This 177-nucleotide RNA was probed chemically with 2A3 and DMS.
For 2A3 the reverse transcriptase was SuperScript II with manganese.
Values are in units of 0.01, from 0 to 300, in steps of 10.
RNA sequence: GGGAACGACUCGAGUAGAGUCGAAAAAAUUUUAAUCCUAAUUGGAGAAGGCCAAAGGACUGUACUACUUUUGUAGGUGUAGCAGUCGCCCAGUGGGAAAGCGCCAACUAGGUUACAAUUGUGGUGGAAUAUCUCCGAUUUUCGAAUCGGAGAUAUUAAAAGAAACAACAACAACAAC
Reactivity to 2A3 in 0.01 (KOAc 150mM, MgCl2 10mM, bicine 150mM(pH8.5), 24C), signal-to-noise 7, nucleotides 027 to 126: a000a000u090u090u060u090a030a070u130c000c000u010a010a020u010u020g010g020a110g090a300a140g220g040c080c060a020a000a000g040g000a000c000u000g020u030a020c000u010a000c010u040u170u220u300g060u120a000g030g000u110g020u080a020g000c010a000g010u010c000g000c000c010c000a080g120u300g030g010g020a020a060a020g170c030g000c010c000a000a020c000u000a010g010g030u020u040a040c070a050a060u080u100g050u080g100g070u050g060g050
Reactivity to DMS in 0.01 (KOAc 150mM, MgCl2 10mM, bicine 150mM(pH8.5), 24C), signal-to-noise 4, nucleotides 027 to 126: a040a040u010u000u000u000a030a030u020c010c000u000a010a040u000u000g000g000a030g010a150a110g010g010c170c110a020a030a020g010g000a010c000u000g000u010a020c000u000a010c000u000u030u020u050g010u000a010g010g010u010g000u020a040g010c000a010g000u000c010g010c000c010c000a100g000u040g000g010g000a010a080a060g020c010g000c010c000a000a010c080u000a010g000g010u000u000a030c110a020a050u000u000g010u010g010g010u010g010g010